[RMDB]
RNA sequence: GGGAACGACUCGAGUAGAGUCGAAAAGUUAGGUGAGGCGGCUACACGAACAUAGGCCACUGACCCCGAACGUCGAGAGACGCCCCGGGUCAGGACAGCUCUUCCCGGCUUAAGGAUUGAGCCCAGGUAUCACCCUGGCUAUUCGUAGCCAGGGUAACAAAUGGUUAAGAUUCGUCUUAACCAUUUGAAAAGAAACAACAACAACAAC
Reactivity to DMS in 0.01 (KOAc 150mM, MgCl2 10mM, bicine 150mM(pH8.5), 24C), signal-to-noise 2, nucleotides 027 to 156: g020u000u000a040g030g010u000g000a070g020g010c020g000g000c010u000a070c020a160c080g010a090a110c050a100u000a090g020g000c020c000a140c010u000g000a030c030c010c000c050g000a060a030c000g020u000c000g000a300g000a300g010a040c000g010c020c020c030c200g000g000g000u010c000a010g010g000a100c070a100g000c030u010c000u000u000c020c000c010g010g000c060u000u000a040a110g000g010a190u020u010g000a110g000c040c020c000a270g020g020u010a090u000c050a020c000c000c000u000g010g000c010u000a020u010u000c180g000u010a010g010c020c010a020g000g010g010u010a010a000
Reactivity to 2A3 in 0.01 (KOAc 150mM, MgCl2 10mM, bicine 150mM(pH8.5), 24C), signal-to-noise 2, nucleotides 027 to 156: g070u100u100a050g020g020u090g050a070g020g040c040g030g000c040u110a030c060a010c130g140a160a010c060a110u220a030g050g010c030c000a020c000u000g000a000c040c010c010c010g030a050a010c000g010u000c010g020a020g010a010g000a210c000g010c000c020c000c040g000g000g000u010c000a000g010g020a010c050a010g010c020u050c010u090u030c010c000c000g010g020c020u120u080a070a070g040g030a120u120u170g030a020g000c050c000c000a080g100g070u080a080u240c040a030c000c010c010u020g010g000c000u010a020u040u140c230g030u010a000g020c000c000a000g000g000g000u020a010a000
An RNA of 207 nucleotides, treated with DMS and 2A3 and read out base by base. Reactivities are given for positions 27 through 156. For 2A3 the reverse transcriptase was SuperScript II with manganese. Source: RMDB library M2RFPK, as collected in RNAgym. Conditions: 150 mM KOAc, 10 mM MgCl2 and 150 mM bicine (pH 8.5), 24 C.